[RMDB]
RNA sequence: GGGAACGACUCGAGUAGAGUCGAAAAAUACAGCGUAAUCGAGCGGAGGAAAACGGCACUCCGAAAAUCCGGUACGAUUAUGAUCCCACUGCGUCGACGCUAGAUGCAGAACCGGAUUGCGGAGGAACCCUAAACACCUAUUCGUAGGUGUUUAGGGAAAAGAAACAACAACAACAAC
Reactivity to 2A3 in 0.01 (KOAc 150mM, MgCl2 10mM, bicine 150mM(pH8.5), 24C), signal-to-noise 4, nucleotides 027 to 126: a000u180a030c070a040g010c020g080u080a100a130u130c080g030a020g070c050g050g040a100g050g020a030a090a020a050c050g080g000c040a020c080u030c010c000g000a160a080a010a010u000c000c000g020g030u070a050c090g040a090u180u120a110u300g110a050u040c020c010c000a020c010u000g000c000g020u010c010g050a070c070g020c220u060a030g000a010u010g000c000a010g030a020a010c000c000g000g010a010u000u010g040c000g000g000a000g000g030a010a030
Reactivity to DMS in 0.01 (KOAc 150mM, MgCl2 10mM, bicine 150mM(pH8.5), 24C), signal-to-noise 4, nucleotides 027 to 126: a080u010a090c120a090g010c030g030u000a050a080u000c060g010a110g020c060g000g000a050g000g000a040a050a070a060c130g010g010c150a200c000u000c010c000g000a030a050a020a010u000c000c010g020g010u000a130c160g000a070u010u010a060u000g000a090u000c010c000c000a300c030u010g000c000g010u000c000g010a160c140g020c170u000a080g000a020u000g000c000a020g000a130a020c000c020g010g000a020u000u000g000c020g010g000a030g000g000a050a110
This 177-nucleotide RNA was probed chemically with 2A3 and DMS. For 2A3 the reverse transcriptase was SuperScript II with manganese. For 2A3, 4,386 sequencing reads were counted.